RNA sequence: GGGAACGACUCGAGUAGAGUCGAAAACUUGACUGGGCUCAACAGUCAAGAGGCUACAAUCUUGAUCGAGUAGCCCGAUCAAGAAAAUGUGCAGUGUUUGAGCGAGAAGCUCAAGCACUGCAUAAAAGGCCAUUAAUAUGUUCGCAUAUUAAUGGCCAAAAGAAACAACAACAACAAC
Reactivity to DMS in 0.01 (KOAc 150mM, MgCl2 10mM, bicine 150mM(pH8.5), 24C), signal-to-noise 2, nucleotides 027 to 126: c020u000u000g010a000c000u010g030g000g040c100u030c120a100a100c080a070g010u020c000a000a010g000a060g000g030c090u030a040c230a170a090u000c020u000u000g000a040u000c040g050a250g030u020a080g040c030c050c010g020a040u010c010a030a000g010a080a040a080a070u020g000u000g010c000a010g010u010g000u000u000u020g000a020g000c040g000a170g030a180a180g000c000u000c010a010a010g000c030a010c000u000g010c020a000u000a000a040a110a080
Reactivity to 2A3 in 0.01 (KOAc 150mM, MgCl2 10mM, bicine 150mM(pH8.5), 24C), signal-to-noise 5, nucleotides 027 to 126: c000u000u010g000a000c020u020g000g070g080c060u040c150a090a040c010a060g000u000c010a010a010g010a010g030g030c080u150a080c130a140a130u000c000u010u010g010a020u030c010g040a020g150u100a020g110c010c000c000g000a030u000c000a010a000g040a040a110a020a040u120g010u000g000c000a000g000u010g000u000u000u010g000a000g000c030g000a060g050a150a060g020c000u000c000a000a000g010c000a010c000u000g000c000a000u000a000a020a000a000